[RMDB]
RNA sequence: GGGAACGACUCGAGUAGAGUCGAAAAGAUAUGGAGAAUGGACAUGAUCUGUGAUCGGAAACGAUCAUCAGAUCAACAGCCAUCUCCUAAGUCAAAACCGACGUGCUACUUCGGUAGCACGUCGGAACUAACACUAAAAGUUCGCUUUUAGUGUUAGAAAAGAAACAACAACAACAAC
Reactivity to 2A3 in 0.01 (KOAc 150mM, MgCl2 10mM, bicine 150mM(pH8.5), 24C), signal-to-noise 4, nucleotides 027 to 126: g020a020u060a050u110g020g040a010g070a240a200u010g000g020a030c080a210u110g010a000u000c010u000g000u010g010a000u000c000g020g020a080a070a040c010g000a000u000c000a020u170c010a000g010a000u000c000a000a000c020a000g040c000c000a010u010c010u000c000c000u010a150a020g060u030c030a010a010a070a160c010c000g000a000c020g010u020g010c030u020a020c000u020u090c240g160g000u010a010g020c000a000c000g010u000c010g000g000a000a000
Reactivity to DMS in 0.01 (KOAc 150mM, MgCl2 10mM, bicine 150mM(pH8.5), 24C), signal-to-noise 4, nucleotides 027 to 126: g000a020u010a300u010g000g000a010g010a080a050u010g000g010a030c070a220u000g000a000u000c000u000g010u000g010a000u000c000g000g010a090a070a180c000g010a010u000c000a000u020c020a000g000a010u000c000a010a060c280a140g010c010c000a010u000c000u000c000c000u000a010a090g010u000c020a070a040a110a120c010c000g000a010c000g010u000g000c010u000a010c010u000u020c180g010g020u000a000g010c000a000c000g000u000c000g000g000a010a060